This 177-nucleotide RNA was probed chemically with 2A3.
Conditions: 150 mM KOAc, 10 mM MgCl2 and 150 mM bicine (pH 8.5), 24 C.
RNA sequence: GGGAACGACUCGAGUAGAGUCGAAAAAUGAAGAAGUUGUUUGGCAAUGUCAAAACUGUGGUCAUGUGUAUGUAGGUACUGAAGCACCAGAAAAAUGCCCAGUAUGUGACCAUCCAAAAGCGUAUUUCCAGUCGAUAUCAUUCGUGAUAUCGACUGGAAAAGAAACAACAACAACAAC
Reactivity to 2A3 in 0.01 (KOAc 150mM, MgCl2 10mM, bicine 150mM(pH8.5), 24C), signal-to-noise 1, nucleotides 027 to 126: a000u300g000a030a130g050a040a000g000u000u000g100u030u000u000g000g060c120a130a000u160g000u020c000a070a000a100a000c000u060g010u090g140g000u140c050a000u030g160u060g070u000a100u180g090u130a070g050g060u000a010c090u000g050a120a000g030c000a040c000c000a010g180a000a100a000a000a000u040g000c030c000c000a000g000u060a000u180g130u040g000a030c000c000a040u300c000c120a080a180a000a000g060c020g040u160a060u000u000u030